[RMDB]
RNA sequence: GGGAACGACUCGAGUAGAGUCGAAAACAAAACUGACCAUCUAUGAGGUCAUACAUCGUCAUAGUAAAACAAAACAAAACUGACCAGUUAUGAGGUCAUACAUCGUCAUAACAAACAAAACAACAAAAGUAUGCUGGCUAUUCGUAGCCAGCAUACUAAAAGAAACAACAACAACAAC
Reactivity to 2A3 in 0.01 (KOAc 150mM, MgCl2 10mM, bicine 150mM(pH8.5), 24C), signal-to-noise 2, nucleotides 027 to 126: c060a000a050a020a040c030u100g000a000c030c000a010u060c010u000a010u020g020a000g020g000u040c030a110u090a090c070a190u060c120g180u040c010a000u000a010g020u130a030a050a080a140c120a050a030a060a000c100a000a000a000a200c160u090g000a000c000c000a000g030u010u040a000u010g010a000g000g020u000c000a000u300a040c070a050u130c050g020u000c000a000u020a000a010c000a000a020a020c120a020a080a000a020c100a050a000c020a010a120a000